[RMDB]
RNA sequence: GGGAACGACUCGAGUAGAGUCGAAAAAGCCUGGCUACGGCCAGGCAACUUGGCACCUAGUAAGCACUCAGUAAAUACUUGUUGAGUGCCUGCUAUGUGCCAGGCAAGCCACUGUACGCAGUGGCAAGACCGUGGAACGCUUCGGCGUUCCACGGUCAAAAGAAACAACAACAACAAC
Reactivity to 2A3 in 0.01 (KOAc 150mM, MgCl2 10mM, bicine 150mM(pH8.5), 24C), signal-to-noise 1, nucleotides 027 to 126: a000g000c000c000u020g000g040c000u020a100c300g100g000c010c000a000g000g030c000a000a040c000u070u020g000g010c020a000c000c000u000a000g000u000a000a000g040c000a000c000u000c000a010g040u050a080a200a050u300a250c040u170u150g010u090u010g000a000g000u000g000c010c010u000g000c000u010a000u000g020u000g000c000c000a000g000g000c030a070a070g000c000c000a000c000u010g000u060a030c200g000c130a030g000u000g000g000c000a000a000
Chemical mapping of a 177-nucleotide RNA with 2A3. The 2A3 profile rests on 571 reads. Conditions: 150 mM KOAc, 10 mM MgCl2 and 150 mM bicine (pH 8.5), 24 C. It was measured as part of the RMDB library RFM100.